[RMDB]
RNA sequence: GGGAACGACUCGAGUAGAGUCGAAAAGGAACAGCUCAAGAAGGCUGUGGAAGAGAGGGAACUCCUCCUCAAGGAACUCCUCCACCGAGUCCGAAACACCCUCUCGCUCAUCCUCAGCUUCAUCCACUCCGUCUUCACAAUUCGUUGUGAAGACGGAAAAAGAAACAACAACAACAAC
Reactivity to 2A3 in 0.01 (KOAc 150mM, MgCl2 10mM, bicine 150mM(pH8.5), 24C), signal-to-noise 1, nucleotides 027 to 126: g060g000a080a070c080a100g080c070u060c210a070a140g100a100a030g300g030c010u000g010u050g000g000a110a000g030a000g000a010g000g050g000a080a050c040u060c000c030u000c000c000u020c040a000a030g020g000a150a140c020u020c020c010u100c160c000a060c020c050g010a000g000u000c040c030g020a060a070a020c030a060c000c000c000u010c000u050c010g000c040u120c030a180u030c010c000u020c010a010g010c040u060u000c030a100u030c020c020a090c060
Reactivity to DMS in 0.01 (KOAc 150mM, MgCl2 10mM, bicine 150mM(pH8.5), 24C), signal-to-noise 1, nucleotides 027 to 126: g000g040a070a050c110a040g000c080u020c180a030a140g030a130a030g040g000c000u010g000u010g000g000a080a030g000a020g000a050g010g030g000a080a120c090u000c030c030u000c030c010u000c080a180a150g000g000a120a100c000u000c020c020u000c070c060a070c110c160g000a060g030u000c020c030g000a050a110a160c300a080c020c000c030u000c030u010c000g000c190u010c150a150u000c000c030u010c030a000g020c000u020u000c030a100u020c090c050a060c180